[RMDB]
RNA sequence: GGGAACGACUCGAGUAGAGUCGAAAAGAUAUGUAGUACAACAGUCUACAUAUCGCAUACUAGACUGUUGUACUAGUAUGCAGCCUUGUACGGUGGACAUGCGAAAGCAUGUCCAUCGUACAAGGCAGCAGCAACAUGGGUUCGCCCAUGUUGCUGCAAAAGAAACAACAACAACAAC
Reactivity to DMS in 0.01 (KOAc 150mM, MgCl2 10mM, bicine 150mM(pH8.5), 24C), signal-to-noise 1, nucleotides 027 to 126: g010a070u000a020u000g020u010a000g010u000a030c040a030a060c000a020g020u010c000u000a020c220a070u000a050u010c260g000c040a300u000a030c140u000a000g010a040c010u000g000u000u000g010u000a010c000u000a020g000u000a010u000g040c060a040g060c020c000u020u000g000u000a000c000g030g000u000g000g010a000c000a000u000g000c000g010a150a090a080g000c000a010u000g000u000c000c000a000u000c000g030u000a010c000a000a000g000g010c000a010
Chemical mapping of a 177-nucleotide RNA with DMS. Reactivities are given for positions 27 through 126. The RNA was probed in 150 mM KOAc, 10 mM MgCl2 and 150 mM bicine (pH 8.5) at 24 C. It was measured as part of the RMDB library OK2TRN.